[RMDB]
RNA sequence: GGGAACGACUCGAGUAGAGUCGAAAAGGGCUUGACGCAUCGCCCGAAUAGGAUGCAUGUGCUUUUGCACUAAGAUAAAUGUCCGUAUAGUAGGGGACUUAGAACCUACUCAUUAAUGUCCGAAGAGUCUGGGACGAUCAUCAGGCAAGACUAAGAAAGGUAUCAGCAUAUUCGUAUGCUGAUACCUAAAAGAAACAACAACAACAAC
Reactivity to 2A3 in 0.01 (KOAc 150mM, MgCl2 10mM, bicine 150mM(pH8.5), 24C), signal-to-noise 2, nucleotides 027 to 156: g050g000g000c010u040u060g080a020c070g000c000a030u020c000g000c000c000c030g000a010a020u080a080g060g000a020u020g060c030a050u050g080u010g020c070u050u090u290u300g030c000a000c020u060a040a050g030a040u020a050a160a120u100g050u010c010c070g040u060a080u020a090g020u000a000g000g010g000g040a020c030u060u130a020g100a050a000c000c000u000a010c000u010c050a010u010u300a120a100u110g010u000c010c050g010a120a020g030a030g050u000c000u110g000g000g080a080c000g050a050u100c040a010u010c000a010g000g010c000a010a020g040a040c030u080a050a010g040a100a100
Reactivity to DMS in 0.01 (KOAc 150mM, MgCl2 10mM, bicine 150mM(pH8.5), 24C), signal-to-noise 2, nucleotides 027 to 156: g000g030g080c030u000u000g020a050c030g000c080a090u040c040g010c020c010c010g020a040a090u000a060g040g030a030u010g010c090a130u000g020u000g010c020u000u000u000u000g010c010a030c000u010a120a130g000a090u000a040a130a100u010g000u010c060c020g000u010a080u010a080g030u010a050g000g010g020g000a290c110u010u000a030g010a220a180c000c000u000a010c010u000c080a090u000u000a010a060u010g010u000c010c000g000a190a090g020a130g000u000c070u000g030g030g000a070c000g020a060u000c040a060u010c020a040g020g030c000a060a080g000a110c020u020a070a130g020a110a150